[RMDB]
RNA sequence: GGGAACGACUCGAGUAGAGUCGAAAAAUUUGCCUUCUACCCUGCUUGCACUAAUGGUCAUGCUGUACCGACUCUCUUUAGACUUAAGGGAGGUGCACCUGUAAAAAAAGUAGCCUUUGGCGGUGAUUAAUCGCAGGGUUCGCCCUGCGAAAAAGAAACAACAACAACAAC
Reactivity to DMS in 0.01 (KOAc 150mM, MgCl2 10mM, bicine 150mM(pH8.5), 24C), signal-to-noise 3, nucleotides 027 to 129: a130u020u020u010g040c030c010u000u050c060u040a150c020c050c020u030g000c050u090u010g020c000a050c000u050a040a050u020g040g010u020c100a050u030g000c050u030g020u010a000c110c100g000a250c020u060c020u050c020u020u000u090a090g060a100c130u030u000a000a000g000g010g000a040g050g040u020g010c060a070c050c040u030g030u090a000a000a030a010a010a000a040g010u010a120g020c040c030u000u010u000g080g000c110g020g030u090g030a040u050u020a000a000
Reactivity to 2A3 in 0.01 (KOAc 150mM, MgCl2 10mM, bicine 150mM(pH8.5), 24C), signal-to-noise 2, nucleotides 027 to 129: a000u070u030u110g180c030c010u100u050c030u040a070c000c000c000u000g000c030u040u030g000c050a050c050u140a070a030u120g030g000u050c060a010u060g120c060u050g030u010a000c040c110g000a020c000u000c010u000c000u000u000u000a240g010a180c070u060u180a010a000g030g040g000a010g060g000u000g000c000a050c000c030u020g150u190a000a030a030a000a000a000a000g040u030a000g000c000c000u080u010u090g090g000c040g000g060u050g000a050u030u210a050a060

The record gives the reactivity of an RNA of 170 nucleotides to DMS and 2A3. Conditions: 150 mM KOAc, 10 mM MgCl2 and 150 mM bicine (pH 8.5), 24 C. The DMS profile rests on 7,260 reads. Reactivities are given for positions 27 through 129. For DMS the reverse transcriptase was MarathonRT. The 2A3 profile rests on 3,124 reads.